An RNA of 207 nucleotides, treated with 2A3 and read out base by base. For 2A3, 470 sequencing reads were counted. The reactions ran in a buffer of 150 mM KOAc, 10 mM MgCl2 and 150 mM bicine (pH 8.5), at 24 C.

RNA sequence: GGGAACGACUCGAGUAGAGUCGAAAAAGAAGGGAUGGAGGUGGGAAGUGGUGGUUAUGGAACUCCUACCACUUGGAUCUUCACCUGCAUGGUCAUUCAGUCUUCAUAGUCUUCUUUUGAGGACAUUUCAGAAAAGGAAACUGAGGCUCAGGAUGAGCAGCGAUCUUGUAUUCGUACAAGAUCGCUGAAAAGAAACAACAACAACAAC
Reactivity to 2A3 in 0.01 (KOAc 150mM, MgCl2 10mM, bicine 150mM(pH8.5), 24C), signal-to-noise 1, nucleotides 027 to 156: a030g090a030a020g010g000g000a050u050g000g030a000g030g020u120g010g080g000a020a010g050u050g030g000u010g000g020u110u100a120u190g060g100a080a130c090u040c050c000u020a010c000c050a000c000u060u060g020g030a020u030c000u140u110c020a020c050c010u000g020c060a040u100g000g000u040c000a090u140u020c000a040g010u020c050u130u000c030a040u040a060g020u040c020u030u000c000u000u300u010u200g070a060g000g000a020c000a050u040u210u030c030a090g120a130a090a000a070g040g010a060a000a000c030u010g010a020g030g070c070u070c030a060g080g000a240u130g020a040g000